Chemical mapping of a 177-nucleotide RNA with 2A3 and DMS.
RNA sequence: GGGAACGACUCGAGUAGAGUCGAAAAGAUAUGGAUCCGUGAUAGACAUGCUGAACCCAUCGGAAACGAUGGGAGCAGCAACAGCUAUACGGAUCCUAAGUCAAACGCUGUUCUUCGGAACAGCGAAUCUAACGCAGCAGUUCGCUGCUGCGUUAGAAAAAGAAACAACAACAACAAC
Reactivity to 2A3 in 0.01 (KOAc 150mM, MgCl2 10mM, bicine 150mM(pH8.5), 24C), signal-to-noise 1, nucleotides 027 to 126: g010a010u020a030u070g000g010a020u000c040c030g000u090g260a060u000a010g090a070c290a270u300g000c000u010g000a040a040c000c000c020a000u000c000g000g010a010a000a000c010g000a000u000g000g080g010a010g000c000a000g070c000a000a030c140a000g010c000u000a000u000a020c000g030g010a000u000c000c010u020a020a000g000u000c010a060a030a140c030g000c010u020g010u040u060c040u080u050c300g170g000a020a000c000a000g000c010g000a010a020
Reactivity to DMS in 0.01 (KOAc 150mM, MgCl2 10mM, bicine 150mM(pH8.5), 24C), signal-to-noise 1, nucleotides 027 to 126: g010a030u000a280u020g000g000a020u000c000c010g040u020g020a020u000a010g010a060c070a270u000g000c010u020g000a030a010c020c000c000a010u000c000g050g030a090a100a130c010g010a000u000g000g000g010a040g000c000a000g060c000a040a010c300a120g010c020u000a000u000a030c010g010g000a000u000c000c000u000a000a110g000u010c020a140a060a170c030g040c000u000g010u000u000c010u000u010c270g040g000a000a000c010a000g000c000g010a000a030
Record summary
The DMS profile rests on 1,144 reads. Values cover nucleotides 27 to 126. For 2A3, 2,022 sequencing reads were counted.